This 177-nucleotide RNA was probed chemically with DMS and 2A3. 2A3 adducts were read by reverse transcription with SuperScript II with manganese. The DMS profile rests on 1,581 reads. Conditions: 150 mM KOAc, 10 mM MgCl2 and 150 mM bicine (pH 8.5), 24 C.

RNA sequence: GGGAACGACUCGAGUAGAGUCGAAAAGAUAUGGAGUACCGGAUCGCCUAAGACAGGCGAUCGGAAACGAUCGCUCGAGGAACUACGAUCCGUACUCCUAAGUCAAAUCCUACGUUCGCGUAGGAAAGCUUACACUUGAGUUCGCUCAAGUGUAAGCAAAAGAAACAACAACAACAAC
Reactivity to DMS in 0.01 (KOAc 150mM, MgCl2 10mM, bicine 150mM(pH8.5), 24C), signal-to-noise 2, nucleotides 027 to 126: g000a010u000a150u010g000g000a010g020u000a000c280c120g050g010a010u000c010g010c020c070u000a120a150g000a160c300a100g010g000c000g000a010u010c000g000g000a030a050a070c030g000a010u000c000g000c000u000c110g020a050g000g000a070a050c160u010a120c020g000a000u000c000c000g030u000a000c020u010c000c000u010a000a070g000u000c000a080a080a150u000c000c000u010a000c000g020u000u020c260g010c010g000u000a010g000g000a000a060a080
Reactivity to 2A3 in 0.01 (KOAc 150mM, MgCl2 10mM, bicine 150mM(pH8.5), 24C), signal-to-noise 3, nucleotides 027 to 126: g000a000u020a010u090g000g000a000g010u010a020c110c250g030g000a010u000c030g160c140c090u230a170a050g090a060c040a030g010g050c000g000a000u000c000g000g000a000a010a000c010g000a010u020c000g000c040u060c050g100a140g060g080a200a150c230u270a060c300g000a000u000c000c010g000u000a000c000u020c010c000u000a030a000g040u020c000a010a020a220u010c010c000u000a010c000g010u020u100c300g000c000g140u010a000g000g000a110a010a000